[RMDB]
RNA sequence: GGGAACGACUCGAGUAGAGUCGAAAAGGGGUCAAUCGUGGGCAUAGACAUGACGACCACUGAAGCCUCCACGGUGGUACGUCAACAGCUAUGCCGUAACAUCGAUUGACGGAGGCACCCAAAGGGUUUAAUGCAGUGUUCGCACUGCAUUAAACCCGUGUAAACUCUGGUUCGCCAGAGUUUACACAAAAGAAACAACAACAACAAC
Reactivity to DMS in 0.01 (KOAc 150mM, MgCl2 10mM, bicine 150mM(pH8.5), 24C), signal-to-noise 2, nucleotides 027 to 156: g010g040g030g030u000c010a020a050u010c040g040u000g020g020g020c020a090u010a060g010a160c040a170u010g010a030c000g030a180c010c000a020c010u000g010a030a090g010c000c010u020c020c010a300c030g000g030u010g010g000u000a050c010g020u000c000a070a070c110a100g000c040u010a000u000g000c010c020g040u000a030a060c110a070u000c000g020a050u000u000g000a020c050g000g040a040g090g060c000a130c020c000c000a110a090a140g050g020g040u000u000u000a010a000u000g000c000a010g030u000g000u000u010c300g030c030a010c000u000g000c000a000u000u000a030a010a000c000c000c000
Reactivity to 2A3 in 0.01 (KOAc 150mM, MgCl2 10mM, bicine 150mM(pH8.5), 24C), signal-to-noise 3, nucleotides 027 to 156: g170g010g020g000u000c000a010a010u000c010g010u040g020g010g010c010a000u010a030g090a240c140a180u070g000a000c010g010a010c010c000a000c000u000g000a090a010g010c010c000u000c000c010a020c000g000g000u020g020g000u130a300c000g010u010c010a050a030c090a060g050c010u010a000u010g000c010c010g000u020a000a000c010a160u190c010g000a000u010u000g010a000c010g000g000a000g000g000c000a030c000c010c010a080a060a030g000g000g000u000u000u000a000a000u000g000c000a010g010u000g030u040u070c100g030c090a010c000u010g000c010a000u000u000a000a000a000c000c000c000

Record summary:
The record gives the reactivity of an RNA of 207 nucleotides to DMS and 2A3. Values cover nucleotides 27 to 156. The reactions ran in a buffer of 150 mM KOAc, 10 mM MgCl2 and 150 mM bicine (pH 8.5), at 24 C. DMS adducts were read by reverse transcription with MarathonRT.